Notes:
This 177-nucleotide RNA was probed chemically with DMS and 2A3. The reactions ran in a buffer of 150 mM KOAc, 10 mM MgCl2 and 150 mM bicine (pH 8.5), at 24 C. Source: RMDB library M2PK50, as collected in RNAgym. For 2A3, 1,830 sequencing reads were counted.
RNA sequence: GGGAACGACUCGAGUAGAGUCGAAAAGCAUACAACUUCGGUUGUAUGCAACGACAGAGUUGACUGUCAUUAACAACGUAACAUGUGAGUUACAAUAACACAUUGCAGCAGCUUUCGAGCUGCUGAAUGCGUGUAAAACUUUCGAGUUUUACACGCAAAAAGAAACAACAACAACAAC
Reactivity to DMS in 0.01 (KOAc 150mM, MgCl2 10mM, bicine 150mM(pH8.5), 24C), signal-to-noise 2, nucleotides 027 to 126: g000c000a000u010a010c000a010a010c000u000u020c200g010g010u010u000g010u000a000u010g010c020a020a020c130g000a020c000a010g000a060g010u000u000g000a180c010u010g000u000c020a160u000u010a040a100c100a050a050c180g000u000a080a040c150a070u000g010u000g000a120g000u000u010a050c020a070a050u010a120a060c060a040c040a020u000u000g030c010a020g010c020a010g000c000u000u000u020c130g000a020g020c000u000g000c000u000g010a030a010
Reactivity to 2A3 in 0.01 (KOAc 150mM, MgCl2 10mM, bicine 150mM(pH8.5), 24C), signal-to-noise 2, nucleotides 027 to 126: g000c000a000u000a000c010a020a010c000u040u030c150g110g010u010u000g010u000a000u000g020c010a000a020c080g010a000c000a000g010a010g000u030u040g060a150c000u000g020u030c040a020u090u190a050a050c070a020a020c070g060u060a030a030c040a050u090g070u050g270a150g040u050u080a010c010a020a070u150a080a020c060a010c030a130u080u300g070c010a020g000c000a010g000c000u000u060u080c150g060a000g010c000u010g000c000u000g000a010a000